The record gives the reactivity of an RNA of 177 nucleotides to DMS and 2A3. The data come from the RNA Mapping Database (RMDB), library TTRDEL. DMS adducts were read by reverse transcription with MarathonRT. For DMS, 956 sequencing reads were counted. Conditions: 150 mM KOAc, 10 mM MgCl2 and 150 mM bicine (pH 8.5), 24 C. For 2A3 the reverse transcriptase was SuperScript II with manganese.
RNA sequence: GGGAACGACUCGAGUAGAGUCGAAAAGAUAUGGAGGUUAGCAAGCUCGUGAAUUCCAUUCGGAAACGAAUGGAUCCACGAGUGAUGACCUAACCUCCUAAGUCAAAGCGAAUGUUCGCAUUCGCAACGUGUCUCCAUGGUUCGCCAUGGAGACACGAAAAGAAACAACAACAACAAC
Reactivity to DMS in 0.01 (KOAc 150mM, MgCl2 10mM, bicine 150mM(pH8.5), 24C), signal-to-noise 2, nucleotides 027 to 126: g000a040u000a300u010g000g010a000g010g000u000u000a000g000c050a090a140g000c000u000c010g070u010g020a010a000u000u000c000c000a000u000u010c030g000g040a070a100a190c000g010a010a000u000g010g000a000u020c020c010a000c000g040a010g010u000g040a020u010g020a090c300c000u000a000a010c000c000u000c000c010u000a030a060g000u000c010a070a210a110g000c000g000a010a020u000g010u020u000c150g030c020a000u000u000c000g030c010a090a040
Reactivity to 2A3 in 0.01 (KOAc 150mM, MgCl2 10mM, bicine 150mM(pH8.5), 24C), signal-to-noise 1, nucleotides 027 to 126: g040a020u080a040u190g000g000a000g030g010u000u000a000g030c050a160a150g020c000u000c000g000u010g030a060a090u300u010c000c010a000u020u000c000g010g050a030a050a060c000g000a000a020u000g000g000a010u010c020c000a000c040g020a000g000u010g000a030u010g000a010c010c010u000a010a010c010c000u000c000c000u000a070a010g010u000c080a130a090a010g000c010g030a000a000u020g040u050u120c290g000c140a000u000u000c000g010c030a020a040